This 177-nucleotide RNA was probed chemically with 2A3 and DMS. The RNA was probed in 150 mM KOAc, 10 mM MgCl2 and 150 mM bicine (pH 8.5) at 24 C. The data come from the RNA Mapping Database (RMDB), library OK2TST.
[RMDB]
RNA sequence: GGGAACGACUCGAGUAGAGUCGAAAAGGAUGGUAUAAAAACAUAACAGGAACUGAUGAUGUUCCGAUAUUAGCAUACUUAUUGGUUGAAAUGUAUGAUGAGGAGGGACCUUUAAUUACACUUGUGGGAUUGAAACGCUAUUCGUAGCGUUUCAAUCAAAAGAAACAACAACAACAAC
Reactivity to 2A3 in 0.01 (KOAc 150mM, MgCl2 10mM, bicine 150mM(pH8.5), 24C), signal-to-noise 2, nucleotides 027 to 126: g060g000a030u070g010g090u070a090u080a100a170a020a000a020c040a050u180a080a040c100a110g030g010a010a010c010u040g090a240u130g020a000u130g180u000u000c000c000g000a000u000a030u030u110a020g000c000a020u010a020c010u130u150a070u120u170g100g100u070u080g080a100a130a030u060g010u020a040u030g030a010u060g000a020g000g000a020g000g040g040a010c000c000u000u130u110a080a100u020u130a050c070a010c100u090u070g060u060g110g050
Reactivity to DMS in 0.01 (KOAc 150mM, MgCl2 10mM, bicine 150mM(pH8.5), 24C), signal-to-noise 4, nucleotides 027 to 126: g000g010a100u000g000g020u020a090u030a040a100a050a110a060c090a100u010a090a090c140a200g000g000a030a020c020u000g010a140u010g000a090u020g010u000u000c010c010g000a120u000a030u010u000a070g020c090a040u000a020c030u010u000a080u000u020g010g010u000u000g010a080a040a050u000g010u000a020u000g010a090u010g000a090g010g010a140g000g020g010a070c040c050u000u010u000a020a100u010u000a090c100a060c080u010u000g010u010g010g010